RNA sequence: GGGAACGACUCGAGUAGAGUCGAAAAUAAACUCCUGUACAGUUUUUGAAUGAUGAAAGGAGGAUGAGCUUAUAUGUCGCGAGUGAAGUAUGUCCGUGCGCGUUUACACUGUGUAGGUAGCGGGUGAGCCAUUAGCUCAGUUCGCUGAGCUAAUGGCAAAAGAAACAACAACAACAAC
Reactivity to DMS in 0.01 (KOAc 150mM, MgCl2 10mM, bicine 150mM(pH8.5), 24C), signal-to-noise 3, nucleotides 027 to 126: u040a090a110a080c120u000c000c010u050g000u000a140c110a060g010u000u000u030u010u030g010a070a070u020g000a040u030g000a060a140a070g040g000a160g000g000a040u000g020a110g010c070u010u020a120u030a020u000g030u030c040g000c050g000a030g030u000g000a090a020g030u000a090u010g010u010c010c000g030u000g000c080g010c030g010u000u020u010a050c300a060c060u000g010u010g010u000a040g010g020u030a040g020c040g010g000g000u000g000a190
Reactivity to 2A3 in 0.01 (KOAc 150mM, MgCl2 10mM, bicine 150mM(pH8.5), 24C), signal-to-noise 3, nucleotides 027 to 126: u170a000a120a000c020u010c000c000u010g030u060a080c040a020g010u000u000u200u300u300g300a110a060u210g180a060u070g010a000a070a070g010g020a000g020g020a030u120g040a000g000c030u060u100a120u090a000u260g140u060c040g020c070g070a060g020u150g030a090a000g030u070a040u090g060u000c020c000g000u030g000c070g000c000g060u000u060u040a080c080a010c010u020g000u000g010u050a010g000g010u010a030g030c080g010g060g020u050g000a020
Structure probing data (DMS and 2A3) for a 177-nucleotide construct. Source: RMDB library OK1LIB, as collected in RNAgym. The RNA was probed in 150 mM KOAc, 10 mM MgCl2 and 150 mM bicine (pH 8.5) at 24 C.